[RMDB]
Background:
An RNA of 177 nucleotides, treated with 2A3 and DMS and read out base by base. 2A3 adducts were read by reverse transcription with SuperScript II with manganese. The RNA was probed in 150 mM KOAc, 10 mM MgCl2 and 150 mM bicine (pH 8.5) at 24 C. The 2A3 profile rests on 1,195 reads. Reactivities are rounded to 0.1 and cut off at 0 and 3.
RNA sequence: GGGAACGACUCGAGUAGAGUCGAAAAGAAAGAAAGUUUGGUUUUGUUUGGGUUUGUUCUAGGUAUGGUCCCAGGGAUCCCAGAUCAAACCAGGCCCCUGGGCCUAUCCUAGAACCAACCUAAGCAAUUCCUCUCCAUUCUUCGGAAUGGAGAGGAAAAAAGAAACAACAACAACAAC
Reactivity to 2A3 in 0.01 (KOAc 150mM, MgCl2 10mM, bicine 150mM(pH8.5), 24C), signal-to-noise 2, nucleotides 027 to 126: g070a050a150a020g070a040a070a000g000u080u030u070g090g000u060u030u010u000g030u000u010u000g000g020g000u000u000u000g000u000u000c000u000a010g020g000u040a080u220g020g000u250c000c000c000a000g020g010g000a050u200c020c000c000a040g030a160u220c110a020a110a080c030c000a000g020g000c000c000c000c000u000g000g000g000c010c000u020a020u000c000c010u010a000g000a010a000c000c000a010a000c000c000u000a000a000g000c000a000a010
Reactivity to DMS in 0.01 (KOAc 150mM, MgCl2 10mM, bicine 150mM(pH8.5), 24C), signal-to-noise 2, nucleotides 027 to 126: g000a140a100a010g050a060a090a090g030u000u020u020g020g010u000u010u010u000g030u000u000u020g010g000g020u020u000u000g000u000u000c000u000a000g040g040u030a130u020g010g000u000c000c000c000a030g010g000g000a080u000c140c040c010a040g020a100u000c240a050a150a210c110c010a030g000g000c300c010c000c000u000g000g010g000c040c000u000a000u020c000c000u030a010g010a000a020c000c030a000a000c010c020u000a000a000g000c030a010a030